[RMDB]
RNA sequence: GGGAACGACUCGAGUAGAGUCGAAAAAAGCUUCAACGCCUUUUUUUCCAAUCUUCUUUAGCACCGGGCUAGGGAGUAAGCCCGUGGAACCUUAGUUUUGUUCCCUCGGGACUUACUUGUGGUUCCUGUGGUGCACUCCUGACCCUGCUGCUUUGAACCUAGGAUGAUUCUUCGGAAUCAUCCUAGGAAAAGAAACAACAACAACAAC
Reactivity to 2A3 in 0.01 (KOAc 150mM, MgCl2 10mM, bicine 150mM(pH8.5), 24C), signal-to-noise 2, nucleotides 027 to 156: a040a000g080c110u300u210c170a130a030c170g000c030c030u060u020u000u020u010u020u100c050c030a110a260u080c060u140u020c000u000u110u060a000g000c000a020c060c030g000g040g000c030u080a110g010g000g050a000g040u100a060a000g000c000c000c000g030u050g000g000a010a000c000c000u030u010a040g070u060u220u090u100g080u180u090c030c000c000u090c100g010g000g000a000c000u000u000a000c000u010u030g070u130g130g000u000u030c020c040u050g150u230g050g010u020g000c050a000c020u000c010c000u070g080a120c000c000c000u010g060c030u000g000c000u050u020u090g040a060a080